[RMDB]
RNA sequence: GGGAACGACUCGAGUAGAGUCGAAAAAAGUGAAUAAGUAAAUUGUGAAAGUUCAGGGUUGACCAACAACCACACCAAGAUUAUUAACUUAUCAAAUGAACAGGUACUAAACGAGAUGACACAGCACCAACGAUCCUGCUUUCGAGCAGGAUCGUUGAAAAGAAACAACAACAACAAC
Reactivity to 2A3 in 0.01 (KOAc 150mM, MgCl2 10mM, bicine 150mM(pH8.5), 24C), signal-to-noise 1, nucleotides 027 to 126: a000a000g040u000g040a060a060u140a000a000g030u090a040a090a230u260u130g100u140g140a120a000a020g100u000u040c000a000g000g000g200u000u000g030a140c110c000a000a010c000a000a000c000c000a040c000a100c060c100a020a000g000a280u000u010a050u100u150a120a000c000u000u000a070u070c000a000a000a270u210g080a010a000c010a000g000g030u010a000c000u120a100a020a020c020g030a050g000a050u100g000a010c000a000c000a010g010c000a000c050